[RMDB]
RNA sequence: GGGAACGACUCGAGUAGAGUCGAAAAGUGCCGACCCAGGUAGCACGGGUCGUGGUAGGUGAUGUCCUGAGAAACCGGAGUGACAGGGACCAGCCUCUUGUCGCGCACCAACCGAUUGAGCAGCUGGCAUGCCGGCUGAUUUCGAUCAGCCGGCAUGAAAAGAAACAACAACAACAAC
Reactivity to DMS in 0.01 (KOAc 150mM, MgCl2 10mM, bicine 150mM(pH8.5), 24C), signal-to-noise 2, nucleotides 027 to 126: g010u000g000c010c010g030a020c020c040c000a110g000g020u000a060g030c080a190c140g000g040g010u000c000g000u010g000g000u070a030g010g000u000g000a160u010g010u000c000c040u000g000a150g000a070a130a110c080c080g000g000a150g000u030g000a050c040a060g000g010g010a190c070c010a040g000c030c000u000c000u010u000g050u010c020g000c110g000c150a020c090c060a090a120c070c000g000a080u010u000g020a040g000c060a030g000c000u000g000g030
Reactivity to 2A3 in 0.01 (KOAc 150mM, MgCl2 10mM, bicine 150mM(pH8.5), 24C), signal-to-noise 2, nucleotides 027 to 126: g090u080g010c000c000g010a000c000c000c030a040g010g150u110a020g030c090a050c080g000g040g000u010c040g040u060g040g080u090a070g000g050u010g030a100u010g090u090c010c000u100g000a020g060a150a090a000c050c020g000g040a060g000u080g000a010c050a060g000g030g000a020c000c010a000g010c000c000u020c040u060u040g010u040c020g000c000g020c030a070c000c000a040a060c000c020g100a040u070u140g080a060g020c150a030g030c020u020g010g000

The record gives the reactivity of an RNA of 177 nucleotides to DMS and 2A3. The data come from the RNA Mapping Database (RMDB), library OK1LIB. Values cover nucleotides 27 to 126. 2A3 adducts were read by reverse transcription with SuperScript II with manganese. The RNA was probed in 150 mM KOAc, 10 mM MgCl2 and 150 mM bicine (pH 8.5) at 24 C.